[RMDB]
RNA sequence: GGGAACGACUCGAGUAGAGUCGAAAACAUCCGUAAGCCUAUCACGGUCGCUUUUGUCGAGUUCGUCUAAUUCUCGCUUGGCCGUCGUAUGGAUAACGGGCUGGUAACUCACCAUAUCUAACACGUCUCACUGGCACGUCUAAAGUGGUGUGCUAUACCUCCUUCUCAGCUUCGGCUGAGAAGGAGGAAAAGAAACAACAACAACAAC
Reactivity to 2A3 in 0.01 (KOAc 150mM, MgCl2 10mM, bicine 150mM(pH8.5), 24C), signal-to-noise 1, nucleotides 027 to 156: c020a050u060c000c000g040u020a010a130g100c010c010u070a060u130c000a000c010g020g050u040c090g150c100u250u300u100u160g180u300c080g020a020g020u060u170c080g060u000c140u160a180a000u150u090c000u020c000g060c020u030u160g040g010c000c010g010u040c020g000u000a060u270g040g010a020u040a100a060c010g000g000g110c150u000g020g040u020a110a010c020u030c060a110c000c000a050u080a110u210c020u030a050a050c020a000c210g080u020c000u020c100a020c100u070g030g010c030a000c040g050u070c020u140a090a170a020g190u060g150g000u000g000u000g000c000u000a000u120a060
The record gives the reactivity of an RNA of 207 nucleotides to 2A3. For 2A3, 394 sequencing reads were counted. The reactions ran in a buffer of 150 mM KOAc, 10 mM MgCl2 and 150 mM bicine (pH 8.5), at 24 C. Values cover nucleotides 27 to 156.